[RMDB]
RNA sequence: GGGAACGACUCGAGUAGAGUCGAAAAGGCUUUUAGAAGUAGUCGACACAUUAGAUUCUGUAUUCUUUAAAGAUUUAUCUUCAGCACUACUGUAGGGAUCGACAACCGUCACAGUAAAAAGUCCACACCUCACCUCCCACUUCGGUGGGAGGUGAGGAAAAGAAACAACAACAACAAC
Reactivity to 2A3 in 0.01 (KOAc 150mM, MgCl2 10mM, bicine 150mM(pH8.5), 24C), signal-to-noise 2, nucleotides 027 to 126: g010g000c000u130u120u030u030a120g070a140a000g000u190a000g020u020c110g030a000c040a000c000a270u080u150a040g080a230u110u000c010u060g140u110a090u010u000c030u030u230u150a080a300a120g060a050u150u160u190a230u190c060u050u130c000a000g050c030a000c000u080a000c000u010g010u020a200g040g040g000a160u020c010g090a000c030a100a000c000c060g040u090c060a000c000a150g090u140a080a000a000a010a000g010u000c000c020a030c010a010
An RNA of 177 nucleotides, treated with 2A3 and read out base by base. It was measured as part of the RMDB library OK1LIB. For 2A3, 460 sequencing reads were counted. 2A3 adducts were read by reverse transcription with SuperScript II with manganese.